RNA sequence: GGGAACGACUCGAGUAGAGUCGAAAACCGACCAUCUUCGGAUGGUCGGAAAAAAGAUAUGGAACUGUUGGUACGAUCCAAUGGAUCGGAAACGAUCCACUGGACACGACUACCACCAGUUCCUAAGUCAAAAAAUCGCUGACUUCGGUCAGCGAAAGCACUCUUUAUGGUUCGCCAUAAAGAGUGCAAAAGAAACAACAACAACAAC
Reactivity to 2A3 in 0.01 (KOAc 150mM, MgCl2 10mM, bicine 150mM(pH8.5), 24C), signal-to-noise 1, nucleotides 027 to 156: c010c000g010a010c000c010a000u000c000u040u110c260g210g010a000u000g000g000u000c000g000g000a120a000a000a000a000a000g000a000u010a010u040g010g000a000a000c000u000g000u020u020g020g000u040a070c210g130a300u010c000c000a000a000u000g000g000a000u000c000g020g000a010a000a010c000g000a010u000c000c000a000c000u000g000g020a010c030a040c120g300a170c060u010a000c000c000a010c020c000a000g000u000u000c000c000u000a010a000g000u000c030a000a020a000a020a220a020u070c000g000c000u000g000a020c000u040u100c300g010g020u000c000a000g000c000g000a000a010a010